[RMDB]
Background: An RNA of 177 nucleotides, treated with DMS and 2A3 and read out base by base.

RNA sequence: GGGAACGACUCGAGUAGAGUCGAAAACAGGCACAGUUCGCUGUGCCUGAAAAGUGCAGGCUUAGCACAAUAAGCCAAAAAGAUCUUGAAAAUGAUCAAAAAAAACGUGAGCGUUCGCGCUCACGAAGAACUCAUAGUAGUUCGCUACUAUGAGUUCAAAAGAAACAACAACAACAAC
Reactivity to DMS in 0.01 (KOAc 150mM, MgCl2 10mM, bicine 150mM(pH8.5), 24C), signal-to-noise 3, nucleotides 027 to 126: c010a030g010g010c000a020c000a010g020u000u010c230g040c000u000g020u000g000c000c000u000g000a020a040a070a130g010u010g000c080a070g020g010c010u000u000a010g010c040a180c120a110a120u010a000a010g000c010c000a070a060a100a080a140g000a020u000c010u000u000g000a080a050a130a100u010g000a010u020c000a020a000a000a120a030a010a080a100c020g010u010g000a010g000c000g040u000u010c230g010c040g010c000u010c000a000c020g000a030a040
Reactivity to 2A3 in 0.01 (KOAc 150mM, MgCl2 10mM, bicine 150mM(pH8.5), 24C), signal-to-noise 2, nucleotides 027 to 126: c010a000g000g010c000a000c010a010g010u050u060c140g050c090u010g010u000g020c000c000u000g000a010a010a000a010g090u050g010c040a030g050g000c000u000u020a010g000c020a020c010a250a080u020a010a000g000c000c000a040a000a010a030a000g010a000u030c020u110u110g100a070a100a090a050u100g000a010u000c000a030a030a080a000a020a050a010a070c000g000u000g010a010g010c010g020u080u110c220g020c020g000c090u000c000a000c000g000a020a020
For DMS the reverse transcriptase was MarathonRT. Values cover nucleotides 27 to 126. The reactions ran in a buffer of 150 mM KOAc, 10 mM MgCl2 and 150 mM bicine (pH 8.5), at 24 C. For 2A3 the reverse transcriptase was SuperScript II with manganese.